Source information:
Structure probing data (2A3 and DMS) for a 177-nucleotide construct. The 2A3 profile rests on 629 reads. For 2A3 the reverse transcriptase was SuperScript II with manganese. For DMS the reverse transcriptase was MarathonRT.
[RMDB]
RNA sequence: GGGAACGACUCGAGUAGAGUCGAAAAUGCUUAGUGGCAGGCACAAAGGUUCAUUUUACAUAUUGUUUAUAUCCUUCUCAAAAGCGUCUAGGCCAUACAGACAACAAAUCCUUUCAAACAAGGGGAAACUUCAAACGUGGUUCGCCACGUUUGAAGUAAAAGAAACAACAACAACAAC
Reactivity to 2A3 in 0.01 (KOAc 150mM, MgCl2 10mM, bicine 150mM(pH8.5), 24C), signal-to-noise 1, nucleotides 027 to 126: u030g040c030u030u060a080g020u050g070g000c060a020g000g050c010a030c000a080a030a000g000g030u090u140c020a070u160u100u040u080a010c030a110u210a190u190u240g050u000u020u000a050u030a020u030c020c000u080u110c000u040c010a160a220a000a000g030c010g070u000c030u060a050g020g000c000c000a020u000a020c000a020g040a040c000a030a020c000a030a150a000u090c000c030u080u050u080c110a160a280a270c000a080a000g010g000g000g010a120a000
Reactivity to DMS in 0.01 (KOAc 150mM, MgCl2 10mM, bicine 150mM(pH8.5), 24C), signal-to-noise 1, nucleotides 027 to 126: u010g000c090u000u000a110g010u000g000g000c060a090g030g040c010a000c070a110a100a130g000g000u000u000c100a040u000u000u000u000a080c090a250u000a110u000u000g000u000u000u000a070u000a050u010c070c000u000u000c040u000c060a070a050a070a100g000c190g020u010c000u000a040g070g000c010c000a080u010a040c230a080g010a120c090a050a040c090a010a160a060u020c000c000u010u000u000c130a010a070a080c190a070a050g000g020g000g000a030a120